[RMDB]
RNA sequence: GGGAACGACUCGAGUAGAGUCGAAAAUUAAAUGGUAGCAACGGUUCCAAAGGAGCCGAAGUUCAAAGCUAAUGCAUCGAUCUAAAAUGCUACCAAAAAGGUAACGAGCUUGGCAAUGAACAAAAAACAAACAUAUAUGGUUCGCCAUAUAUGUUUGAAAAGAAACAACAACAACAAC
Reactivity to 2A3 in 0.01 (KOAc 150mM, MgCl2 10mM, bicine 150mM(pH8.5), 24C), signal-to-noise 3, nucleotides 027 to 126: u100u070a020a040a090u090g010g000u000a010g010c020a040a090c000g000g020u020u000c030c030a290a200a220g030g000a010g000c010c000g030a050a020g010u000u010c030a020a010a010g000c000u080a020a040u200g010c010a220u050c030g080a030u050c040u180a030a060a050a050u100g000c000u000a000c000c000a020a010a060a000a050g040g010u020a060a010c010g000a010g000c020u020u020g020g000c010a010a080u050g000a030a030c010a040a090a000a000a010a000
Reactivity to DMS in 0.01 (KOAc 150mM, MgCl2 10mM, bicine 150mM(pH8.5), 24C), signal-to-noise 5, nucleotides 027 to 126: u010u000a040a080a090u000g000g010u000a010g010c010a130a300c030g000g000u000u000c000c010a110a120a190g030g010a030g000c010c010g000a050a060g010u000u000c010a020a030a300g000c000u000a010a030u010g020c010a060u000c070g010a060u000c060u010a040a050a110a090u000g010c000u000a000c000c010a000a040a060a090a060g000g000u010a060a110c010g000a050g000c000u000u000g010g000c010a010a200u010g000a010a010c030a010a030a070a050a040a110